The record gives the reactivity of an RNA of 177 nucleotides to DMS. DMS adducts were read by reverse transcription with MarathonRT. Reactivities are given for positions 27 through 126. The RNA was probed in 150 mM KOAc, 10 mM MgCl2 and 150 mM bicine (pH 8.5) at 24 C.
[RMDB]
RNA sequence: GGGAACGACUCGAGUAGAGUCGAAAAUCCUCCCGAUUCCGUCCAACCCCUUCCCCCGAGGGUCGCCCAGGAAUGGCGGGACCCACUCGACUGGGGUCCGCGUUCCAUCCUUUCUUACCUUGUGGCCGAAAGGCUACACGUUCGCGUGUAGCCUUUCAAAAGAAACAACAACAACAAC
Reactivity to DMS in 0.01 (KOAc 150mM, MgCl2 10mM, bicine 150mM(pH8.5), 24C), signal-to-noise 1, nucleotides 027 to 126: u010c030c040u010c030c020c040g000a130u000u010c030c020g010u000c020c030a080a250c050c020c020c000u010u010c020c020c010c030c030g010a100g000g000g020u000c070g000c020c000c030a110g000g010a020a010u000g000g020c020g000g020g000a040c000c000c000a010c040u000c180g020a090c110u010g010g020g020g000u000c000c000g000c020g000u000u010c010c010a160u020c080c050u020u000u020c050u000u000a150c060c030u000u000g050u000g000g010c120c080